RNA sequence: GGGAACGACUCGAGUAGAGUCGAAAAAUGGACGGUGCGAUCCUCGUGGUGGCGGCCGACGACGGCGUGAUGGCGCAGACCAGGGAGCACGUGCUCCUCGCCCGGCAGGUGGGCGUGCCUGCGAUCGUAAGAUCCGAAUGUUCGCAUUCGGAUCUUAAAAAGAAACAACAACAACAAC
Reactivity to DMS in 0.01 (KOAc 150mM, MgCl2 10mM, bicine 150mM(pH8.5), 24C), signal-to-noise 4, nucleotides 027 to 126: a080u010g000g000a090c040g020g030u000g000c030g000a110u000c040c020u000c080g030u000g020g040u000g000g010c040g030g010c020c010g010a100c130g020a120c120g000g030c040g030u010g000a110u010g010g010c000g020c080a100g010a050c020c060a110g020g010g010a080g020c020a100c220g000u020g020c070u000c010c020u000c110g020c000c000c030g020g010c060a040g000g020u000g010g010g000c110g000u000g010c020c010u000g000c020g000a100u010c150g020
Reactivity to 2A3 in 0.01 (KOAc 150mM, MgCl2 10mM, bicine 150mM(pH8.5), 24C), signal-to-noise 2, nucleotides 027 to 126: a000u160g000g000a020c040g000g010u020g010c010g040a090u020c000c000u080c040g110u040g050g030u050g050g080c040g040g030c040c000g070a050c080g040a010c030g020g110c060g030u070g070a100u140g040g020c040g010c070a030g140a090c020c000a010g020g000g000a020g040c010a020c200g070u130g010c010u000c000c020u010c080g020c000c000c080g040g000c050a040g000g050u100g050g090g090c050g050u120g010c010c000u040g010c030g040a130u090c050g020